[RMDB]
RNA sequence: GGGAACGACUCGAGUAGAGUCGAAAAGAUAUGGAAAGAUGAGCGAAGAACCGUAACAUCUAUCGGAAACGAUAGUGGGGGAGCUCUACCUUUCCUAAGUCAAAACUUUGUGGUUCGCCACAAAGAAGGUAACGUACAUCUUCGGAUGUACGUUACCAAAAGAAACAACAACAACAAC
Reactivity to DMS in 0.01 (KOAc 150mM, MgCl2 10mM, bicine 150mM(pH8.5), 24C), signal-to-noise 1, nucleotides 027 to 126: g010a050u000a160u000g000g010a000a020a010g000a010u000g080a010g050c000g010a070a160g010a110a200c050c040g000u000a060a180c170a030u030c000u000a020u000c030g020g000a020a090a070c010g000a010u000a000g000u000g000g000g030g010g000a040g010c000u000c000u000a050c100c000u000u010u020c000c000u010a030a080g000u000c010a050a050a050a130c030u000u000u000g020u000g000g010u010u030c230g030c000c010a020c000a000a020a000g010a140a100
Reactivity to 2A3 in 0.01 (KOAc 150mM, MgCl2 10mM, bicine 150mM(pH8.5), 24C), signal-to-noise 2, nucleotides 027 to 126: g020a000u060a020u070g000g000a020a010a020g020a010u030g000a010g020c040g110a300a050g040a300a070c060c000g070u100a050a030c000a200u140c020u000a000u000c010g030g000a040a030a030c010g000a000u010a020g010u010g050g000g040g000g090a070g000c000u010c010u040a080c010c020u000u010u050c010c000u000a080a010g000u020c030a000a000a140a150c010u040u010u020g030u010g000g070u020u080c300g020c040c000a010c000a000a000a000g020a050a030